RNA sequence: GGGAACGACUCGAGUAGAGUCGAAAAGCGUACUACAUGUGUUGUCAGGCUUAAGGACUCGUUGAUCUUUCCCAAAUAGGAAAGGGAGAGUCCCAUAGCCUUGGAUUUACACAUGUAUCGCAAAAGCUCCUUGAGAUGUUCGCAUCUCAAGGAGCAACCCGUUAGAAUUGUUCGCAAUUCUAACGGGAAAAGAAACAACAACAACAAC
Reactivity to 2A3 in 0.01 (KOAc 150mM, MgCl2 10mM, bicine 150mM(pH8.5), 24C), signal-to-noise 3, nucleotides 027 to 156: g010c010g020u100a090c040u000a000c010a000u000g010u010g000u010u030g020u020c000a010g000g000c000u050u040a090a150g000g000a000c000u000c000g090u130u020g000a010u020c010u000u000u020c010c010c000a140a090a100u300a060g000g000a000a010a000g000g000g000a010g010a010g000u010c000c010c000a030u120a000g000c010c010u020u080g030g010a020u170u120u240a000c000a000c010a000u000g000u000a010u110c000g000c000a090a090a000a030g000c000u000c000c000u000u010g000a000g020a010u040g010u220u250c290g010c130a000u000c000u000c000a000a000g000g000a000g000c000a000a000